[RMDB]
RNA sequence: GGGAACGACUCGAGUAGAGUCGAAAAUCGAUGCGCGGCUGGGAAAUCAGCUCGUCGUCCAUGUAGAUGGCUUUGUGUACAGUUACUUCGCGGAACUGGAUGCCGGUGAGUUGGCCAAUUACUGGCGCACACACCCGAAGUUCGCUUCGGGUGUGUGAAAAGAAACAACAACAACAAC
Reactivity to DMS in 0.01 (KOAc 150mM, MgCl2 10mM, bicine 150mM(pH8.5), 24C), signal-to-noise 2, nucleotides 027 to 126: u010c020g000a110u000g000c180g000c100g010g000c060u000g000g000g000a090a120a110u010c030a050g010c010u000c040g040u000c010g000u010c020c060a030u010g010u000a060g010a100u000g020g000c140u000u010u030g030u010g030u020a050c050a060g000u000u000a060c030u020u030c160g000c140g000g010a070a050c000u000g010g000a070u000g040c040c070g010g000u010g010a080g020u000u010g000g000c020c010a040a160u000u000a050c090u000g010g010c020g030